[RMDB]
RNA sequence: GGGAACGACUCGAGUAGAGUCGAAAAGAGGACGGACUACUGGCUGUGUCCGGAGUAGGACGUCCGAAGCAGAGGCUGCGACCGGUCUGCAAACACGACAGGGCUGUAUUGUCACCUGGAGUGGAGAGGGUACCAUCUGCUUCGGCAGGUGGUACCCAAAAGAAACAACAACAACAAC
Reactivity to DMS in 0.01 (KOAc 150mM, MgCl2 10mM, bicine 150mM(pH8.5), 24C), signal-to-noise 2, nucleotides 027 to 126: g030a260g000g010a000c010g010g000a070c000u000a010c000u040g000g000c000u090g020u050g040u020c000c000g040g020a060g020u000a000g010g000a080c020g000u000c000c000g000a060a100g010c040a040g000a050g000g020c020u000g010c180g010a080c070c010g020g030u030c000u010g010c050a110a140a110c030a000c010g010a120c020a020g000g000g000c060u020g000u020a080u030u000g010u010c050a200c000c000u000g000g000a150g020u000g000g000a110g010a210
Reactivity to 2A3 in 0.01 (KOAc 150mM, MgCl2 10mM, bicine 150mM(pH8.5), 24C), signal-to-noise 2, nucleotides 027 to 126: g180a060g000g030a000c000g000g000a010c000u000a020c000u070g090g060c070u130g030u050g050u110c020c000g000g000a010g020u010a000g010g000a000c000g010u030c000c000g030a020a010g000c010a000g030a000g030g000c040u150g040c150g040a080c000c020g030g020u000c010u000g000c000a000a030a000c030a000c020g030a030c000a000g000g010g000c020u010g080u180a110u080u230g060u180c030a140c180c000u010g000g000a030g010u000g020g000a060g050a030
Record summary:
Chemical mapping of a 177-nucleotide RNA with DMS and 2A3. It was measured as part of the RMDB library OK1LIB. The DMS profile rests on 3,765 reads.